[RMDB]
RNA sequence: GGGAACGACUCGAGUAGAGUCGAAAACAGGAGCUGGGCGUCUCCUCUGAUGCCAGUCCUGAAGAGAUCAAACGUGCCUAUCGGAAGUUGGCGCGCGACCUGCAUCCGGACGCGAACCCGGGCAACCGCGAUAAGGACGCUUCGGCGUCCUUAUCGCAAAAGAAACAACAACAACAAC
Reactivity to 2A3 in 0.01 (KOAc 150mM, MgCl2 10mM, bicine 150mM(pH8.5), 24C), signal-to-noise 1, nucleotides 027 to 126: c000a010g000g060a000g230c010u160g020g170g160c000g070u040c010u010c010c000u140c170u090g000a020u000g000c000c080a000g050u000c000c060u010g030a060a000g060a000g040a050u050c040a000a200a000c010g040u040g010c000c030u160a180u230c070g010g190a040a120g060u070u000g030g000c030g000c000g020c030g080a120c000c000u000g000c000a040u050c070c010g030g010a120c150g000c000g140a080a040c030c000c000g000g020g040c010a090a020c030c070